[RMDB]
The data come from the RNA Mapping Database (RMDB), library VIROID. The record gives the reactivity of an RNA of 207 nucleotides to 2A3. For 2A3, 607 sequencing reads were counted.
RNA sequence: GGGAACGACUCGAGUAGAGUCGAAAAUGGGGCGGCUUAGCGGAUUAAUGAAAGUUCUACCCUAGUGGUACUUACCCCAUGCAAAGUCUGCGUGCAGGCGGGGUAUGUGCCUCUGGGGCACAACUGGUUGAGAGCUAGGCUGCUCUCCUGAUGAGCCGGUCCUUUACCUGUUCGCAGGUAAAGGACCAAAAGAAACAACAACAACAAC
Reactivity to 2A3 in 0.01 (KOAc 150mM, MgCl2 10mM, bicine 150mM(pH8.5), 24C), signal-to-noise 1, nucleotides 027 to 156: u230g000g070g010g000c000g060g000c000u010u000a000g010c010g190g130a150u100u040a070a050u130g200a200a060a040g030u030u020c030u130a020c000c000c000u010a050g000u010g030g000u000a000c000u020u000a000c000c010c000c000a000u070g030c000a030a000a150g050u120c100u140g080c110g080u080g030c000a030g140g080c030g020g000g000g000u070a020u000g000u010g030c020c020u000c000u000g030g000g000g000c000a020c020a020a000c010u020g150g000u070u040g020a020g000a000g060c000u010a000g060g010c000u020g000c000u000c000u010c010c000u070g090a140u130g060a020g090c050c080